[RMDB]
Conditions: 150 mM KOAc, 10 mM MgCl2 and 150 mM bicine (pH 8.5), 24 C. Structure probing data (DMS) for a 177-nucleotide construct. Source: RMDB library TTRDEL, as collected in RNAgym.

RNA sequence: GGGAACGACUCGAGUAGAGUCGAAAAGAUAUGGAUCGUGUAGACAUGGGCGGUCGGAAACGACCGUCCAACAGCUACCGAUCCUAAGUCAAAGACCUAUGGGAGACUUCGGUCUCCCAUAGGUCAAGUUAACAUCGUGGUUCGCCACGAUGUUAACAAAAGAAACAACAACAACAAC
Reactivity to DMS in 0.01 (KOAc 150mM, MgCl2 10mM, bicine 150mM(pH8.5), 24C), signal-to-noise 2, nucleotides 027 to 126: g010a010u000a210u020g010g010a000u000c000g020u000g000u000a010g010a040c120a220u010g010g020g010c000g000g000u000c000g000g010a060a090a130c000g010a020c010c020g010u000c010c000a030a000c240a170g000c000u000a000c000c000g010a010u000c000c000u020a030a070g000u000c020a100a210a110g000a010c000c000u010a000u000g010g020g020a020g000a020c000u000u010c190g020g000u000c000u000c000c020c000a000u000a000g000g010u000c010a000a010